[RMDB]
RNA sequence: GGGAACGACUCGAGUAGAGUCGAAAAACAAAGGUGCGCAGGCAACUCGUCAGGCGAUCGACGUUAAUGAAGCAAAUCCAUAAUUGCCAAUGAUGAGCAAUUCGCUAUUGCCGCCUAAAAACGGUUACAUAGCCUUACGGUUCGCCGUAAGGCUAUGAAAAGAAACAACAACAACAAC
Reactivity to DMS in 0.01 (KOAc 150mM, MgCl2 10mM, bicine 150mM(pH8.5), 24C), signal-to-noise 4, nucleotides 027 to 126: a070c080a080a100a020g020g010u000g000c040g030c060a060g010g020c030a040a050c050u000c030g010u010c020a040g010g000c000g000a050u010c090g010a060c090g030u010u000a080a060u000g030a130a140g020c140a040a100a070u050c080c090a090u040a060a040u020u010g020c010c010a140a150u030g000a090u020g000a060g040c110a080a080u020u000c190g020c090u010a060u010u000g000c000c000g000c020c000u010a040a030a050a140a130c120g000g000u000u000a140
Reactivity to 2A3 in 0.01 (KOAc 150mM, MgCl2 10mM, bicine 150mM(pH8.5), 24C), signal-to-noise 6, nucleotides 027 to 126: a000c110a020a110a010g020g000u020g010c070g010c010a020g000g000c000a010a040c020u020c010g010u020c010a000g000g000c000g020a030u020c040g080a100c020g040u080u120a080a060u270g070a090a030g070c050a050a030a020u120c040c010a070u080a170a040u060u020g000c000c030a100a210u130g030a030u030g010a030g010c040a030a060u110u100c090g000c010u040a100u080u170g010c000c010g010c000c010u060a040a020a010a020a010c020g030g000u020u030a010

The record gives the reactivity of an RNA of 177 nucleotides to DMS and 2A3. Conditions: 150 mM KOAc, 10 mM MgCl2 and 150 mM bicine (pH 8.5), 24 C. For 2A3 the reverse transcriptase was SuperScript II with manganese. DMS adducts were read by reverse transcription with MarathonRT.